[RMDB]
RNA sequence: GGGAACGACUCGAGUAGAGUCGAAAAUGUCACUUGAGUUUAUUAUGGAGCAUCAAUUGUAAAGAUAGCUCAAAUGCCAUGAUUCUCCUAAGGUUGCAGCCCAAAUGGGUGCAAAUAGAAUUUGCCAUCCUGCAAAAAUUUUCGAAUUUUUGCAGGAAAAAGAAACAACAACAACAAC
Reactivity to DMS in 0.01 (KOAc 150mM, MgCl2 10mM, bicine 150mM(pH8.5), 24C), signal-to-noise 2, nucleotides 027 to 126: u000g000u010c010a000c040u000u000g010a040g010u010u000u000a020u000u000a090u030g000g020a300g000c030a030u000c220a100a090u020u010g010u010a040a190a190g000a010u000a040g010c000u000c010a030a010a020u000g000c070c000a010u000g000a170u010u000c120u000c020c080u000a030a100g020g030u000u000g000c030a020g020c000c000c030a110a080a100u030g000g030g000u000g010c020a010a030a070u000a080g020a020a300u000u000u000g020c150c080a170